[RMDB]
RNA sequence: GGGAACGACUCGAGUAGAGUCGAAAAGACAAAUGGAGCAUAUUAGGCUAAGCAGGAAAGGGACGGUAGCUCCUGGUGUCAGUUCAUACGGUGUGAUGCAUCUGCGUCGUGCACACAUGCACCCAAAUUUCCUAUAUGGCUUCGGCCAUAUAGGAAAAAAAGAAACAACAACAACAAC
Reactivity to DMS in 0.01 (KOAc 150mM, MgCl2 10mM, bicine 150mM(pH8.5), 24C), signal-to-noise 3, nucleotides 027 to 126: g030a040c040a060a130a060u010g010g010a030g020c030a110u000a070u000u010a120g030g010c040u000a100a110g000c050a040g000g000a050a060a070g010g020g000a030c060g030g010u000a040g030c020u000c010c010u000g010g000u020g010u000c030a040g000u000u000c100a060u000a120c150g000g020u000g000u000g000a130u000g020c010a010u000c090u000g010c080g030u020c120g010u010g020c030a010c020a020c050a040u010g020c070a130c000c010c030a040a040a150
Reactivity to 2A3 in 0.01 (KOAc 150mM, MgCl2 10mM, bicine 150mM(pH8.5), 24C), signal-to-noise 1, nucleotides 027 to 126: g010a020c000a000a100a040u120g000g000a000g040c020a120u010a120u150u140a130g130g000c040u020a060a000g050c020a000g140g010a070a100a020g000g000g000a020c050g000g020u020a010g010c000u020c040c020u010g000g070u040g010u070c040a040g020u000u110c000a040u080a130c100g100g000u010g010u000g090a210u040g000c000a020u020c050u150g000c000g110u120c030g020u060g020c000a040c010a010c010a010u040g060c030a030c000c010c000a020a070a000